[RMDB]
RNA sequence: GGGAACGACUCGAGUAGAGUCGAAAACGGUAUUGGUCAAGGCUAUACCGACAGCGCACCUUCAAAAGGGCGCUUAAUCCCCGGCCAAGUGCCGAAAUAUGAAUAGACACCGCUGGGCUGGUAGGGCAAAACAUGGCGAUCUUCGGAUCGCCAUGAACCGAUUCGUAUAGUUCGCUAUACGAAUCGGAAAAGAAACAACAACAACAAC
Reactivity to 2A3 in 0.01 (KOAc 150mM, MgCl2 10mM, bicine 150mM(pH8.5), 24C), signal-to-noise 2, nucleotides 027 to 156: c000g020g020u020a010u060u180g050g040u100c110a130a080g090g000c000u010a000u000a050c040c000g000a020c030a030g000c000g000c060a300c100c030u040u120c060a050a120a140a000g000g000g000c000g010c010u000u000a000a010u000c000c000c000c000g010g000c000c020a130a040g070u090g160c000c010g020a120a020a000u180a020u130g060a030a040u070a100g040a020c030a010c010c000g010c060u000g000g080g000c030u040g030g020u050a050g000g010g000c000a020a040a070a040c010a030u010g000g000c000g000a000u000c010u040u020c100g040g000a000u000c010g000c000c000a000u000g000a000a000
Reactivity to DMS in 0.01 (KOAc 150mM, MgCl2 10mM, bicine 150mM(pH8.5), 24C), signal-to-noise 1, nucleotides 027 to 156: c010g020g040u010a060u010u010g050g040u000c030a080a290g180g000c060u000a040u000a050c060c030g040a060c150a050g000c020g000c030a090c020c010u000u010c160a110a050a270a170g000g000g020c000g030c000u040u000a010a050u000c050c010c010c050g040g000c000c030a100a140g020u000g000c020c010g010a050a090a070u040a080u000g000a130a120u000a130g000a070c050a020c020c020g000c020u010g000g030g030c040u040g000g010u000a070g000g000g030c070a070a050a060a300c000a000u000g030g020c000g040a000u000c010u010u020c300g080g000a010u000c000g030c000c000a000u010g000a020a080
This 207-nucleotide RNA was probed chemically with 2A3 and DMS. For 2A3 the reverse transcriptase was SuperScript II with manganese.